About this RNA: This 177-nucleotide RNA was probed chemically with 2A3 and DMS. The reactions ran in a buffer of 150 mM KOAc, 10 mM MgCl2 and 150 mM bicine (pH 8.5), at 24 C. DMS adducts were read by reverse transcription with MarathonRT. Values cover nucleotides 27 to 126.

[RMDB]
RNA sequence: GGGAACGACUCGAGUAGAGUCGAAAAGUAAAUUGGAAUUCUCGAAUUCGCCAGUCGCCUUCUUCGUAUCAAGGAUCUGGAAUUUGAACGGUAUCUUUAUCAUUUUAAUUUCUACUUUUCGUACCAGUUAUACUGAGCGAUUCGUCGCUCAGUAUAAAAAAGAAACAACAACAACAAC
Reactivity to 2A3 in 0.01 (KOAc 150mM, MgCl2 10mM, bicine 150mM(pH8.5), 24C), signal-to-noise 8, nucleotides 027 to 126: g020u040a000a040a100u060u070g040g020a030a040u110u030c060u020c060g040a050a080u090u050c060g040c060c010a030g040u090c060g090c080c000u030u050c040u130u140c080g090u130a090u210c060a020a030g030g020a030u070c020u030g010g020a030a040u060u040u070g020a050a020c040g000g060u070a070u070c090u040u280u090a070u070c040a050u020u030u010u080a050a050u010u050u010c020u010a020c000u040u030u000u020c010g000u010a050c000c000a010g000
Reactivity to DMS in 0.01 (KOAc 150mM, MgCl2 10mM, bicine 150mM(pH8.5), 24C), signal-to-noise 4, nucleotides 027 to 126: g000u020a010a050a060u010u000g010g010a050a020u000u020c100u010c030g000a040a080u010u010c090g010c040c020a040g010u010c210g000c010c000u020u010c080u040u040c120g010u050a080u020c210a030a040g000g000a100u040c010u020g000g000a060a040u010u000u010g020a030a070c130g000g000u000a010u030c120u020u020u000a030u020c020a080u000u000u010u000a020a030u000u010u020c070u000a020c020u000u000u010u000c030g010u000a140c030c020a170g010